[RMDB]
RNA sequence: GGGAACGACUCGAGUAGAGUCGAAAACAGGUUUACUUCGGUAAACCUGAAAUAAAGGCGCAGUGGGGUAGCGCCACUCAAAGGCCCGAAAAUAAAUAAAUAAAACCCGUCUCUUCGGAGACGGGAAGAUGUAAAGGUAGUUCGCUACCUUUACAUCAAAAGAAACAACAACAACAAC
Reactivity to DMS in 0.01 (KOAc 150mM, MgCl2 10mM, bicine 150mM(pH8.5), 24C), signal-to-noise 2, nucleotides 027 to 126: c010a000g000g010u000u000u000a000c010u010u010c180g030g010u000a000a010a010c000c000u010g000a030a060a050u000a070a130a160g010g000c030g010c000a070g000u000g010g010g000g000u020a060g020c010g010c010c000a020c100u000c070a070a050a100g010g000c010c010c030g000a090a040a090a120u010a070a040a070u010a030a060a110u010a070a100a100a080c010c000c000g020u010c000u000c010u000u010c180g000g010a010g000a010c000g000g010g000a000a020
Reactivity to 2A3 in 0.01 (KOAc 150mM, MgCl2 10mM, bicine 150mM(pH8.5), 24C), signal-to-noise 3, nucleotides 027 to 126: c010a000g000g030u000u010u010a020c020u040u150c180g090g000u000a010a000a000c010c000u000g000a000a000a000u030a000a070a030g000g020c010g000c020a020g060u070g050g010g000g010u030a020g010c000g000c010c000a010c010u060c000a100a150a030g070g020c000c000c010g030a070a040a010a000u190a010a040a010u130a060a070a020u140a050a140a040a040c020c010c000g000u000c010u000c000u020u070c280g150g000a000g000a000c000g000g010g000a000a010
Chemical mapping of a 177-nucleotide RNA with DMS and 2A3. 2A3 adducts were read by reverse transcription with SuperScript II with manganese. Source: RMDB library M2PK50, as collected in RNAgym. The reactions ran in a buffer of 150 mM KOAc, 10 mM MgCl2 and 150 mM bicine (pH 8.5), at 24 C.